[RMDB]
RNA sequence: GGGAACGACUCGAGUAGAGUCGAAAAGGGUUAGCGUUCGCGCUAACCCCAGGAUCGAACAUGUCAAAUCUCGCAGACAUGAAACGAUCAAAAGCGAGUAAACUAGACAGUCAUUCGUGACUGUCAAAGACUACUGAACUUUCGAGUUCAGUAGUCUAAAAGAAACAACAACAACAAC
Reactivity to 2A3 in 0.01 (KOAc 150mM, MgCl2 10mM, bicine 150mM(pH8.5), 24C), signal-to-noise 2, nucleotides 027 to 126: g000g000g000u000u000a010g010c000g010u020u020c230g010c010g000c080u000a000a000c000c000c000c000a070g000g120a010u030c000g020a050a030c000a010u000g000u000c010a050a070a260u150c090u060c120g060c080a050g000a000c000a000u000g000a070a060a030c030g010a020u060c000a040a100a000a000g050c060g030a030g120u140a080a130a100c100u050a050g010a020c010a010g020u020c000a020u040u120c190g090u030g000a020c000u000g000u020c000a000a000
Reactivity to DMS in 0.01 (KOAc 150mM, MgCl2 10mM, bicine 150mM(pH8.5), 24C), signal-to-noise 3, nucleotides 027 to 126: g000g000g010u000u000a000g000c000g100u000u020c210g060c010g010c010u000a000a010c000c010c010c040a040g020g000a040u000c020g000a160a300c010a000u000g000u000c020a080a100a120u000c050u010c080g010c090a130g000a020c010a000u000g000a030a100a110c040g000a030u000c090a070a120a100a120g010c090g000a060g000u000a050a110a120c130u000a130g010a020c030a000g010u000c000a030u000u000c160g000u010g000a020c000u000g020u000c000a020a050